[RMDB]
RNA sequence: GGGAACGACUCGAGUAGAGUCGAAAACACAGUUUCGACUGUGGACGAGCGUACUACUUACGACAUGAAAUCAGUGAACUACUAGUAUCCCAAAUAGGAUACUAGCACUACGUGAUUUCAACAGCGUAAGUAUCGCAAAAGGGGUAUUCGUACCCAAUGUGCAAACAUUAUUCGUAAUGUUUGCACAAAAAGAAACAACAACAACAAC
Reactivity to 2A3 in 0.01 (KOAc 150mM, MgCl2 10mM, bicine 150mM(pH8.5), 24C), signal-to-noise 8, nucleotides 027 to 156: c030a000c000a010g030u080u090u190c230g120a060c010u010g020u030g010g040a030c070g110a060g020c010g020u110a110c040u010a000c000u050u000a010c030g220a100c040a070u090g000a000a000a000u000c010a030g060u010g090a080a050c050u090a000c000u000a240g000u000a000u040c020c020c050a170a300a230u230a110g000g000a000u000a000c000u000a000g000c030a010c040u120a030c050g200u100g010a000u000u000u000c010a050a040c040a020g030c000g000u000a010a000g000u000a020u190c010g000c010a020a070a030a070g040g000g000g000u070a050u050u190c190g040u080a050c000c000c000a010a090
Reactivity to DMS in 0.01 (KOAc 150mM, MgCl2 10mM, bicine 150mM(pH8.5), 24C), signal-to-noise 4, nucleotides 027 to 156: c020a020c010a020g010u000u020u010c210g030a070c000u010g000u000g020g020a130c100g000a220g010c010g010u000a120c150u000a000c020u000u000a020c020g000a070c050a300u020g000a020a010a010u010c010a020g010u000g000a170a160c060u010a000c010u000a000g040u010a000u010c000c000c030a050a150a240u010a030g010g010a030u000a010c000u000a000g000c000a040c030u000a050c030g010u000g030a030u000u000u000c000a010a110c110a180g010c010g010u000a020a020g010u000a010u000c030g010c020a080a070a120a150g020g000g030g020u000a100u000u010c140g030u000a130c000c000c000a000a100

Conditions: 150 mM KOAc, 10 mM MgCl2 and 150 mM bicine (pH 8.5), 24 C. The record gives the reactivity of an RNA of 207 nucleotides to 2A3 and DMS. The DMS profile rests on 8,414 reads. For 2A3 the reverse transcriptase was SuperScript II with manganese.